[RMDB]
RNA sequence: GGGAACGACUCGAGUAGAGUCGAAAAGAUGACAUCGCCGAGUUCGACGAUGCGCUGAUCAACCCGGCCGGAGUCGGUGAUGACCACCAUCAGCAGCCGGGCCGGUGUCAGCGCGAUCACCUCCAAGCUCGAGACUCCUAUUCGUAGGAGUCUCGAGAAAAGAAACAACAACAACAAC
Reactivity to 2A3 in 0.01 (KOAc 150mM, MgCl2 10mM, bicine 150mM(pH8.5), 24C), signal-to-noise 1, nucleotides 027 to 126: g110a130u270g000a010c050a150u010c020g040c000c000g060a030g010u120u230c090g030a040c070g020a080u040g000c000g010c000u000g000a020u070c030a070a060c030c030c000g020g000c020c000g060g000a100g200u210c140g050g040u010g010a030u080g100a060c040c070a020c150c000a060u040c040a000g240c030a000g010c030c020g140g080g050c000c000g000g010u060g030u020c040a010g000c000g000c010g000a000u000c000a010c000c000u000c030c030a050a030g030
Reactivity to DMS in 0.01 (KOAc 150mM, MgCl2 10mM, bicine 150mM(pH8.5), 24C), signal-to-noise 1, nucleotides 027 to 126: g020a120u020g010a060c220a090u010c010g020c010c000g000a070g000u000u000c050g010a130c050g010a010u000g010c020g000c020u000g010a010u000c150a090a150c230c000c000g000g020c010c040g010g000a120g000u030c100g040g000u000g000a050u010g000a150c170c130a170c170c000a040u000c090a060g000c070a090g000c000c030g030g010g020c000c010g010g000u020g000u000c020a020g010c010g000c000g020a040u000c030a150c030c050u000c060c010a100a180g020